Chemical mapping of a 177-nucleotide RNA with 2A3 and DMS. The data come from the RNA Mapping Database (RMDB), library TTRDEL. In probing experiments dimethyl sulfate is read out at A N1 and C N3, which are open when not base-paired. The reactions ran in a buffer of 150 mM KOAc, 10 mM MgCl2 and 150 mM bicine (pH 8.5), at 24 C. Values are in units of 0.01, from 0 to 300, in steps of 10. 2A3 adducts were read by reverse transcription with SuperScript II with manganese.
[RMDB]
RNA sequence: GGGAACGACUCGAGUAGAGUCGAAAAGAUAUGGAUUACGGGAGAGCGUGGUCGGAAACGACCACAGCUCUUUGAUCGUAAUGUCCUAAGUCAAACACUGCGUCCUUCUUCGGAAGGACGCAGUGAAUCAUUCUAUGAAGUUCGCUUCAUAGAAUGAAAAAGAAACAACAACAACAAC
Reactivity to 2A3 in 0.01 (KOAc 150mM, MgCl2 10mM, bicine 150mM(pH8.5), 24C), signal-to-noise 1, nucleotides 027 to 126: g010a010u070a050u130g010g000a000u000u030a000c010g030g000g030a080g000a000g020c000g000u010g000g000u010c010g000g080a060a050a050c040g000a000c000c030a000c020a010g000c000u000c000u050u020u010g010a020u040c010g010u010a030a040u140g120u050c000c000u040a120a020g050u030c050a060a070a110c000a020c000u020g000c020g000u020c000c010u010u010c010u060u130c300g090g000a000a000g040g160a010c010g000c000a000g000u000g000a010a000
Reactivity to DMS in 0.01 (KOAc 150mM, MgCl2 10mM, bicine 150mM(pH8.5), 24C), signal-to-noise 5, nucleotides 027 to 126: g010a040u010a220u010g010g000a050u000u000a000c010g010g000g000a010g010a020g040c000g020u000g000g010u000c000g010g000a070a080a190c000g010a010c000c000a000c000a040g030c000u000c000u000u000u010g010a090u010c010g000u000a010a030u000g010u010c000c010u000a060a160g010u000c060a160a100a250c010a010c000u000g010c000g000u000c000c010u000u000c000u000u010c200g020g000a020a000g000g000a000c000g010c010a000g000u000g000a020a090